[RMDB]
RNA sequence: GGGAACGACUCGAGUAGAGUCGAAAACGGCAAAAAAGCAAACUUGACCUCCAAGGAUAAAAGAGAUCUUAUCCAAGGAUGCAAAAGAUAAUCUCACUUUUGACACCCACUGAUCUCGAACUUAAAGAAAACCGAGACUACUUCGGUAGUCUCGGAACACUACAGAGUACUUCGGUACUCUGUAGUGAAAAGAAACAACAACAACAAC
Reactivity to 2A3 in 0.01 (KOAc 150mM, MgCl2 10mM, bicine 150mM(pH8.5), 24C), signal-to-noise 5, nucleotides 027 to 156: c020g050g020c040a020a000a010a030a080a090g100c090a190a140a080c070u100u090g080a220c020c020u010c010c010a020a020g020g000a020u030a060a040a030a030g030a000g010a010u000c010u030u060a020u040c040c010a030a040g020g000a010u050g010c000a020a040a020a030g020a070u160a190a160u110c050u040c100a080c010u040u030u010u010g040a050c010a070c030c010c010a060c120u080g010a010u000c010u000c000g010a090a070c040u140u170a130a060a040g030a060a090a050a010c000c000g000a000g000a000c000u000a000c000u010u060c110g080g000u000a000g000u000c000u000c000g000g000a000a000
Reactivity to DMS in 0.01 (KOAc 150mM, MgCl2 10mM, bicine 150mM(pH8.5), 24C), signal-to-noise 1, nucleotides 027 to 156: c080g030g130c000a000a080a050a120a040a060g060c000a070a090a080c030u010u000g000a150c050c020u000c020c010a030a300g010g000a130u000a020a070a120a120g000a080g000a110u000c010u000u010a060u000c090c070a070a300g010g010a010u030g000c000a020a010a020a050g000a060u000a060a130u020c120u000c090a090c040u000u000u010u000g030a170c030a050c010c000c000a190c130u000g000a090u000c000u000c020g010a180a040c050u010u000a050a100a150g000a070a030a140a120c000c010g040a040g100a010c000u000a000c020u000u000c300g070g000u000a000g040u010c020u000c000g000g000a070a020